Conditions: 150 mM KOAc, 10 mM MgCl2 and 150 mM bicine (pH 8.5), 24 C.
An RNA of 177 nucleotides, treated with 2A3 and DMS and read out base by base.
For 2A3, 3,084 sequencing reads were counted.
The DMS profile rests on 3,350 reads.

RNA sequence: GGGAACGACUCGAGUAGAGUCGAAAAACUAACCCUAAUGCAGAGUAAGUGGCUGGGCCUUCCUCACACUGCCUCCCGCUGCGUGAAACCUCGCUGUUUUCUUGGCUAACUUUCAGCGAGGUGAGGCGAAUAAAUUUCACUUCGGUGAAAUUUAUUCAAAAGAAACAACAACAACAAC
Reactivity to 2A3 in 0.01 (KOAc 150mM, MgCl2 10mM, bicine 150mM(pH8.5), 24C), signal-to-noise 2, nucleotides 027 to 126: a000c030u040a030a050c020c000c010u060a130a040u140g000c020a020g020a030g140u110a150a030g050u040g100g020c050u030g050g040g030c010c030u060u050c010c000u070c000a040c000a000c050u090g000c000c010u040c000c000c000g010c030u050g000c010g020u040g000a080a030a010c000c010u000c000g000c000u020g030u010u040u020u010c050u070u110g060g000c000u030a060a040c050u110u110u050c000a010g000c010g000a000g000g000u020g000a010g010g000c040
Reactivity to DMS in 0.01 (KOAc 150mM, MgCl2 10mM, bicine 150mM(pH8.5), 24C), signal-to-noise 3, nucleotides 027 to 126: a110c200u010a100a120c020c010c010u020a130a110u000g020c030a050g000a130g010u000a080a070g010u010g000g010c050u000g010g000g010c040c030u000u010c040c010u000c050a060c070a060c060u000g010c040c020u000c020c050c030g030c050u000g020c080g010u000g000a140a160a060c010c000u010c010g020c010u000g000u000u000u000u000c060u000u000g010g000c060u010a080a080c120u000u010u010c000a010g000c000g010a020g000g020u010g010a030g000g020c120